[RMDB]
RNA sequence: GGGAACGACUCGAGUAGAGUCGAAAAUGGUUGCAGAGGGAAGAAAGACAGGACUUAGGUCUGUGCCUGGGCUUGGCCUCUGACUGGCUAUUUGUCUGACCUGGAGCUGAUCUCCUCACACUCUGACCCUCAAUUUCCUCCUCUAUGGAGGAGAGGAUACCGCACUAAAUUUCGAUUUAGUGCGGUAAAAAGAAACAACAACAACAAC
Reactivity to DMS in 0.01 (KOAc 150mM, MgCl2 10mM, bicine 150mM(pH8.5), 24C), signal-to-noise 2, nucleotides 027 to 156: u000g050g020u020u000g000c010a100g020a090g030g010g000a300a050g000a090a070a040g000a060c050a100g050g020a050c030u000u010a060g020g020u000c040u020g010u000g070c010c000u000g020g000g000c010u050u010g000g020c000c000u000c060u000g030a140c160u040g010g010c000u010a100u000u010u000g040u010c050u000g030a090c020c030u000g010g010a060g030c050u010g010a050u010c010u000c010c040u000c070a080c090a110c020u000c030u000g000a050c040c020c000u000c000a050a160u000u010u020c010c000u000c030c000u000c130u000a150u010g020g000a100g010g000a010g020a040g000g020a280
Reactivity to 2A3 in 0.01 (KOAc 150mM, MgCl2 10mM, bicine 150mM(pH8.5), 24C), signal-to-noise 2, nucleotides 027 to 156: u080g030g000u000u060g020c020a010g020a030g030g020g030a130a090g020a060a100a010g010a030c000a000g000g020a020c030u060u130a040g050g000u040c040u050g100u150g050c000c020u070g000g030g000c030u040u030g030g040c000c030u030c040u040g110a100c020u020g010g020c030u060a080u150u150u080g090u060c050u020g010a030c000c000u020g010g020a010g000c050u030g060a140u060c000u030c030c010u030c030a050c010a030c070u030c020u030g090a100c000c000c010u050c040a060a100u000u020u040c000c020u000c020c000u080c050u100a180u270g040g010a000g010g000a010g000a000g000g010a020

The record gives the reactivity of an RNA of 207 nucleotides to DMS and 2A3. 2A3 adducts were read by reverse transcription with SuperScript II with manganese. For 2A3, 1,548 sequencing reads were counted.